[RMDB]
RNA sequence: GGGAACGACUCGAGUAGAGUCGAAAACUCCUGUUGUGGUUUUUCUUCUGAAACAAAAGAAGAAAUUGUCAAAUCAGACUUGCCCUCUUGGAAGUGUGGUCCAGAUUGCUCUACUCCCAAGCUCCAGUGCAAUGAUAUACUUCGGUAUAUCAUUGCAAAAAGAAACAACAACAACAAC
Reactivity to DMS in 0.01 (KOAc 150mM, MgCl2 10mM, bicine 150mM(pH8.5), 24C), signal-to-noise 3, nucleotides 027 to 126: c090u010c020c020u000g020u010u000g020u000g000g030u020u010u000u000u000c010u000u000c000u000g000a060a100a140c270a070a080a120a020g020a020a030g000a050a020a040u010u010g020u020c050a030a090a110u010c030a080g020a050c080u010u010g010c020c020c050u000c060u020u000g010g010a060a060g020u000g020u020g020g010u020c030c020a040g000a130u020u010g000c000u000c030u000a060c040u010c000c050c070a060a170g010c060u020c020c030a100g020
Reactivity to 2A3 in 0.01 (KOAc 150mM, MgCl2 10mM, bicine 150mM(pH8.5), 24C), signal-to-noise 1, nucleotides 027 to 126: c010u010c000c000u030g000u040u000g000u010g100g000u110u000u000u000u000c000u000u000c000u000g050a120a160a120c110a080a070a060a000g020a020a020g010a020a020a090u060u070g070u090c110a010a020a110u030c010a030g040a030c010u030u070g060c000c010c000u020c050u080u080g090g000a060a090g050u100g020u050g150g010u000c000c000a030g020a160u050u050g000c000u000c010u040a050c030u000c000c000c000a000a000g050c000u000c000c020a060g000
An RNA of 177 nucleotides, treated with DMS and 2A3 and read out base by base. The 2A3 profile rests on 818 reads. The RNA was probed in 150 mM KOAc, 10 mM MgCl2 and 150 mM bicine (pH 8.5) at 24 C. For 2A3 the reverse transcriptase was SuperScript II with manganese.